The data come from the RNA Mapping Database (RMDB), library TTRDEL. Structure probing data (DMS) for a 177-nucleotide construct. High DMS reactivity at an A or C suggests that its Watson-Crick edge is free.
RNA sequence: GGGAACGACUCGAGUAGAGUCGAAAAGAUAUGGAGGAGGCUAUGAAGGUACUGGGUCGGAAACGACCUUACUGGAGCCUACUCCUAAGUCAAAAGCAGUGCUUCUACUUCGGUAGAAGCACUGCAAGAAUGCACAGAGGUUCGCCUCUGUGCAUUCAAAAGAAACAACAACAACAAC
Reactivity to DMS in 0.01 (KOAc 150mM, MgCl2 10mM, bicine 150mM(pH8.5), 24C), signal-to-noise 1, nucleotides 027 to 126: g010a090u000a300u010g010g000a010g010g010a010g040g000c000u000a130u010g010a060a110g000g000u000a000c300u010g020g010g000u010c000g010g000a100a050a220c010g010a010c010c010u000u000a000c000u000g010g000a000g010c020c000u000a000c010u000c000c040u000a010a070g000u000c030a060a070a110a140g000c010a000g000u010g010c000u000u000c000u000a000c000u000u030c220g060g010u000a010g000a010a000g010c000a000c000u010g010c000a030a000